[RMDB]
RNA sequence: GGGAACGACUCGAGUAGAGUCGAAAACAGGAGUGGAGCCUGCGGCUUAAUUUGACUCAACACGGGGAAACUUACCAGGUCAGGACAUGGGAAGGAUUGACAGAUUGAGAGUUCUUUCUUGAUUCCUCGCCUGUGGAGUAUUCGUACUCCACAGGCGAAAAGAAACAACAACAACAAC
Reactivity to 2A3 in 0.01 (KOAc 150mM, MgCl2 10mM, bicine 150mM(pH8.5), 24C), signal-to-noise 2, nucleotides 027 to 126: c040a050g040g000a030g040u160g030g010a040g000c020c030u070g010c080g050g010c000u000u050a040a060u070u050u120g050a020c000u040c050a070a080c000a000c050g060g000g000g050a020a020a020c030u030u000a070c030c000a030g020g010u030c010a020g020g020a010c040a060u110g000g000g040a000a000g020g010a020u050u070g070a040c050a070g150a150u070u170g020a070g000a020g140u040u020c020u000u020u030c000u020u070g090a100u080u000c000c000u000
Structure probing data (2A3) for a 177-nucleotide construct. It was measured as part of the RMDB library RFM100. The 2A3 profile rests on 1,086 reads. Values are in units of 0.01, from 0 to 300, in steps of 10. The RNA was probed in 150 mM KOAc, 10 mM MgCl2 and 150 mM bicine (pH 8.5) at 24 C.